[RMDB]
RNA sequence: GGGAACGACUCGAGUAGAGUCGAAAACGAAACUUGUUAAAACAAAAAGUUUAGCGGAAUAACCCAUUUUGUCUGACCGAUCAUCAACGCAGCAAUGGCGUAAGACGUAUUGAUUUUUCAGACAGUUAAUCUCGACCUCUUUCGAGAGGUCGAGAUUAAAAGAAACAACAACAACAAC
Reactivity to 2A3 in 0.01 (KOAc 150mM, MgCl2 10mM, bicine 150mM(pH8.5), 24C), signal-to-noise 2, nucleotides 027 to 126: c000g010a000a000a000c020u020u060g060u110u170a120a010a010a020c060a000a100a030a020a000g010u010u000u010a140g070c060g060g100a230a120u080a070a040c000c040c040a000u290u260u090u060g000u000c000u010g000a000c010c000g010a000u000c000a000u050c040a040a000c000g010c000a000g000c020a110a300u200g250g040c020g020u000a010a010g030a000c000g010u000a090u020u020g040a020u000u000u000u020u020c000a000g030a000c000a000g020u040u020